[RMDB]
RNA sequence: GGGAACGACUCGAGUAGAGUCGAAAAUUGGUGGUCAUUUAACCAUGCUUCCAUCGAUGGGUGCAUGGUUUAUGGCAGAGUGUGAUGCCAUGAACUCAUCAUGGUCAUGCAUGUGUGCAUGGUUAGAUAAGUCGGCUUAAUUCGUUAAGCCGACUUAAAAAGAAACAACAACAACAAC
Reactivity to DMS in 0.01 (KOAc 150mM, MgCl2 10mM, bicine 150mM(pH8.5), 24C), signal-to-noise 4, nucleotides 027 to 126: u000u020g010g020u000g000g010u020c040a040u000u010u000a010a000c030c020a000u000g010c000u030u020c010c010a040u010c300g000a100u010g020g000g010u010g020c040a000u000g000g000u000u020u010a000u000g010g010c040a080g000a120g020u010g020u020g010a100u020g020c010c000a010u010g000a030a070c030u010c060a070u000c020a030u010g000g000u040c080a030u030g000c100a060u010g000u020g010u000g000c020a000u010g000g010u000u000a060g020a120
Reactivity to 2A3 in 0.01 (KOAc 150mM, MgCl2 10mM, bicine 150mM(pH8.5), 24C), signal-to-noise 4, nucleotides 027 to 126: u110u090g060g030u070g010g040u030c030a050u030u040u120a000a010c000c000a000u000g000c000u110u090c000c000a050u090c150g190a150u160g000g020g000u030g010c000a010u000g000g000u020u000u000a010u000g000g000c000a010g020a070g110u130g030u060g050a060u080g000c010c020a010u010g010a030a020c050u010c110a040u000c000a010u050g060g030u080c020a010u050g080c030a040u090g090u050g030u040g120c000a000u000g000g040u030u030a030g000a130
An RNA of 177 nucleotides, treated with DMS and 2A3 and read out base by base.
For 2A3 the reverse transcriptase was SuperScript II with manganese.
It was measured as part of the RMDB libraries RFM100 and RFMREP.
The reactions ran in a buffer of 150 mM KOAc, 10 mM MgCl2 and 150 mM bicine (pH 8.5), at 24 C.